An RNA of 207 nucleotides, treated with DMS and 2A3 and read out base by base. As a SHAPE reagent, 2A3 marks flexible, mostly unpaired nucleotides at the ribose 2'-OH. Values cover nucleotides 27 to 156. For 2A3, 3,037 sequencing reads were counted. The data come from the RNA Mapping Database (RMDB), library M2RFPK.

[RMDB]
RNA sequence: GGGAACGACUCGAGUAGAGUCGAAAAAUAGGCUCUCCAACCCAACUCCUACUCAAUACGUCCUCGUCGUACAGAACGGUAACAUGUUUUCCGAACAUCCGCGCUUGGGUAUAAGAGUAUACACCUUACAGCACCACUUACUUCGGUAAGUGGUGAAGAUUGUGUUUUCGUUCGCGAAAACACAAUCAAAAGAAACAACAACAACAAC
Reactivity to DMS in 0.01 (KOAc 150mM, MgCl2 10mM, bicine 150mM(pH8.5), 24C), signal-to-noise 1, nucleotides 027 to 156: a130u010a070g020g000c010u000c030u010c040c060a130a060c030c000c010a100a070c010u010c010c020u010a040c050u000c010a130a050u000a070c010g020u000c010c020u000c060g010u000c110g030u000a160c020a090g010a030a130c050g020g000u000a170a060c090a130u000g000u020u000u000u000c030c070g010a070a080c030a120u010c000c010g020c010g000c100u010u000g010g010g010u010a070u000a030a120g020a060g000u010a080u000a080c090a050c020c010u000u010a090c060a150g020c010a030c000c010a020c030u010u000a010c000u000u010c280g070g020u000a000a010g000u000g010g000u000g010a000a080
Reactivity to 2A3 in 0.01 (KOAc 150mM, MgCl2 10mM, bicine 150mM(pH8.5), 24C), signal-to-noise 4, nucleotides 027 to 156: a000u120a060g050g010c010u020c000u000c080c040a090a080c010c010c000a020a050c030u040c030c010u060a040c010u020c030a070a060u070a110c030g040u040c020c030u070c060g090u020c020g000u070a040c030a090g080a140a010c020g000g030u060a070a050c030a120u120g040u070u040u030u040c030c020g000a020a010c020a110u050c040c010g080c010g030c070u040u040g010g030g030u040a040u030a070a020g020a000g020u020a020u030a030c050a050c000c020u050u070a040c030a090g030c000a020c000c000a000c010u010u000a000c000u000u020c060g070g000u000a000a000g000u000g000g000u000g000a000a000